[RMDB]
RNA sequence: GGGAACGACUCGAGUAGAGUCGAAAAUACGCGAGGUUCGCCUCGCGUAAAAGAGGAGCGUAUACGUGAGCGUACGUAGUGCUGUACAUCGUUCCUACACGAAUGCACAUGGUUUCGACCAUGUGAAUCAGCUGUAGCGGUUCGCCGCUACAGCUGAAAAAGAAACAACAACAACAAC
Reactivity to 2A3 in 0.01 (KOAc 150mM, MgCl2 10mM, bicine 150mM(pH8.5), 24C), signal-to-noise 2, nucleotides 027 to 126: u030a000c000g030c000g010a000g030g000u040u060c110g110c070c000u000c020g000c010g020u010a000a000a000a020g130a020g030g060a020g010c020g020u120a060u010a300c000g010u010g100a080g130c070g050u050a030c030g020u070a020g060u030g080c020u050g020u090a020c010a060u080c010g000u020u000c000c000u010a020c070a000c040g230a120a080u230g020c020a000c000a000u000g010g050u030u060u050c220g030a000c000c000a000u000g000u010g040a000a020
Reactivity to DMS in 0.01 (KOAc 150mM, MgCl2 10mM, bicine 150mM(pH8.5), 24C), signal-to-noise 1, nucleotides 027 to 126: u010a010c000g000c030g020a020g000g000u000u020c180g030c000c000u000c000g000c000g000u000a000a060a070a100g020a140g000g010a100g020c020g010u000a120u000a020c020g000u000g020a140g000c130g030u000a020c100g040u000a030g000u000g010c020u000g000u020a130c090a100u000c000g000u000u000c020c000u020a110c200a040c140g000a070a110u010g000c010a010c010a020u000g000g020u000u000u010c130g010a020c010c000a010u000g000u000g010a040a110

An RNA of 177 nucleotides, treated with 2A3 and DMS and read out base by base. The reactions ran in a buffer of 150 mM KOAc, 10 mM MgCl2 and 150 mM bicine (pH 8.5), at 24 C. For 2A3 the reverse transcriptase was SuperScript II with manganese. The 2A3 profile rests on 1,787 reads.